[RMDB]
RNA sequence: GGGAACGACUCGAGUAGAGUCGAAAAGAUAUGGAAUCGCCAUAAGGCGUUGAUCUCGGAAACGAGGGAGCCUGUGGGAUUCCUAAGUCAAAAUCGAGUGGAUGUGGUUCGCCACAUCCACUCGAAAGAACCAAAUAGUCUUCGGACUAUUUGGUUCAAAAGAAACAACAACAACAAC
Reactivity to DMS in 0.01 (KOAc 150mM, MgCl2 10mM, bicine 150mM(pH8.5), 24C), signal-to-noise 2, nucleotides 027 to 126: g000a050u000a300u000g010g010a000a010u000c010g020c000c000a020u000a060a040g030g020c000g030u000u010g020a050u000c020u010c010g000g000a140a120a270c000g010a020g030g010g000a040g010c000c010u010g050u000g010g010g000a020u000u000c000c010u010a020a060g010u010c010a070a050a110a210u000c000g000a020g040u000g000g000a000u010g050u000g000g010u000u010c300g010c000c000a010c000a000u000c000c000a010c010u000c000g000a000a020a020
Reactivity to 2A3 in 0.01 (KOAc 150mM, MgCl2 10mM, bicine 150mM(pH8.5), 24C), signal-to-noise 2, nucleotides 027 to 126: g000a030u060a060u160g000g010a010a010u020c110g260c300c000a030u170a280a230g000g000c020g070u210u020g020a010u000c000u020c010g010g040a090a110a070c020g000a000g000g030g000a000g000c000c000u030g010u010g000g000g000a000u010u030c010c000u000a070a010g050u000c020a050a000a010a300u080c000g010a000g010u000g010g020a000u000g020u010g000g060u070u210c300g020c080c000a000c010a010u000c010c000a000c000u010c010g000a000a000a010

Chemical mapping of a 177-nucleotide RNA with DMS and 2A3. For DMS, 1,722 sequencing reads were counted. The reactions ran in a buffer of 150 mM KOAc, 10 mM MgCl2 and 150 mM bicine (pH 8.5), at 24 C. DMS adducts were read by reverse transcription with MarathonRT.